[RMDB]
This 177-nucleotide RNA was probed chemically with DMS and 2A3. For 2A3, 20,473 sequencing reads were counted. The RNA was probed in 150 mM KOAc, 10 mM MgCl2 and 150 mM bicine (pH 8.5) at 24 C.
RNA sequence: GGGAACGACUCGAGUAGAGUCGAAAAGGAGAUCGAAGAUGACCGACGUCAGCACGGUCAGGAUGUAGGUCCGCAUGCAUCCAAGUUGACGAAACUUGACGAUUUCCAAAGCGGACAAGAAGUCAAACAUAUACUCAGGGUUCGCCCUGAGUAUAUGAAAAGAAACAACAACAACAAC
Reactivity to DMS in 0.01 (KOAc 150mM, MgCl2 10mM, bicine 150mM(pH8.5), 24C), signal-to-noise 8, nucleotides 027 to 126: g000g010a020g010a000u000c010g010a150a080g030a270u010g000a010c000c010g020a150c090g000u030c190a090g020c140a140c020g000g000u000c000a030g010g000a010u000g020u000a040g000g000u000c010c010g010c010a070u010g010c010a000u000c000c020a040a020g000u000u000g000a150c260g000a140a010a010c000u000u010g000a210c040g000a020u000u000u010c010c010a050a120a080g000c000g010g000a010c010a120a100g020a130a070g000u020c100a090a090a160
Reactivity to 2A3 in 0.01 (KOAc 150mM, MgCl2 10mM, bicine 150mM(pH8.5), 24C), signal-to-noise 9, nucleotides 027 to 126: g020g010a010g000a010u020c010g040a170a070g080a130u110g010a010c010c000g030a050c040g190u260c130a040g060c200a030c020g000g020u000c000a000g010g000a000u000g000u000a000g000g020u000c000c000g000c000a000u000g000c000a000u000c000c000a000a000g000u000u020g080a110c150g070a050a010a010c010u010u010g030a030c000g000a010u000u010u000c000c000a040a120a020g010c000g000g010a000c000a010a070g170a090a010g080u120c080a080a020a010